[RMDB]
RNA sequence: GGGAACGACUCGAGUAGAGUCGAAAAGAAAUUACGUUUCCUUUACACUUCUCAAACCGGGAUCAAUAGAAGCAAAGCAUCCCUCAUAUCCACGAUGGAGGGUGUCGUGGAGUAUACUGUACCAAAAAGAGCGAACACGGCUUCGGCCGUGUUCGAACCACUAACGUUACUUCGGUAACGUUAGUGGAAAAGAAACAACAACAACAAC
Reactivity to 2A3 in 0.01 (KOAc 150mM, MgCl2 10mM, bicine 150mM(pH8.5), 24C), signal-to-noise 2, nucleotides 027 to 156: g060a030a060a010u120u130a030c050g020u040u030u010c010c000u030u000u030a080c090a060c040u110u110c070u020c080a160a120a050c090c030g010g000g020a010u050c030a050a090u110a160g140a120a030g050c070a140a030a000g030c020a050u020c010c020c000u020c030a090u080a090u050c000c010a000c020g000a020u030g050g080a040g010g060g010u070g000u000c000g000u000g000g000a010g010u000a020u000a030c060u050g080u170a080c040c070a010a060a000a010a110g080a060g090c000g000a000a000c000a000c010g030g020c030u050u080c110g030g000c000c000g000u000g000u000u000c000g010a000a000